RNA sequence: GGGAACGACUCGAGUAGAGUCGAAAAUUUAUGUAACCUGAAAGCAUACAAUCUCAGCCUAUCAGUACAGGGAGCGGAGACUGAUUAUGGAACCAAAAAACUGCUGUGACGACCAGUGCUUGGGCCCGCAAUUCUAUAGGUUCGCCUAUAGAAUUGCAAAAGAAACAACAACAACAAC
Reactivity to 2A3 in 0.01 (KOAc 150mM, MgCl2 10mM, bicine 150mM(pH8.5), 24C), signal-to-noise 1, nucleotides 027 to 126: u020u010u010a020u040g060u020a100a040c000c020u000g160a080a040a020g020c010a010u000a040c030a060a130u030c040u010c040a020g020c010c000u070a080u100c010a000g040u060a080c020a050g050g020g040a040g010c060g020g050a040g020a100c010u010g000a000u020u150a060u150g060g060a060a110c020c070a010a000a000a060a000a110c040u030g000c010u000g030u030g050a040c040g000a040c030c010a040g050u030g000c000u010u030g000g050g000c000c040c000
Reactivity to DMS in 0.01 (KOAc 150mM, MgCl2 10mM, bicine 150mM(pH8.5), 24C), signal-to-noise 2, nucleotides 027 to 126: u010u020u000a030u030g020u000a080a080c050c020u020g000a120a060a130g000c030a030u000a020c120a070a090u000c020u000c020a140g010c020c080u010a070u000c030a050g040u010a080c100a040g010g000g010a050g000c100g000g020a120g020a050c050u010g010a080u000u020a060u000g010g010a080a080c100c070a000a050a100a070a070a100c110u000g010c050u000g000u000g000a060c070g010a050c080c040a070g020u000g000c110u000u000g000g000g000c020c070c130
Conditions: 150 mM KOAc, 10 mM MgCl2 and 150 mM bicine (pH 8.5), 24 C. Structure probing data (2A3 and DMS) for a 177-nucleotide construct. The 2A3 profile rests on 2,037 reads. For 2A3 the reverse transcriptase was SuperScript II with manganese.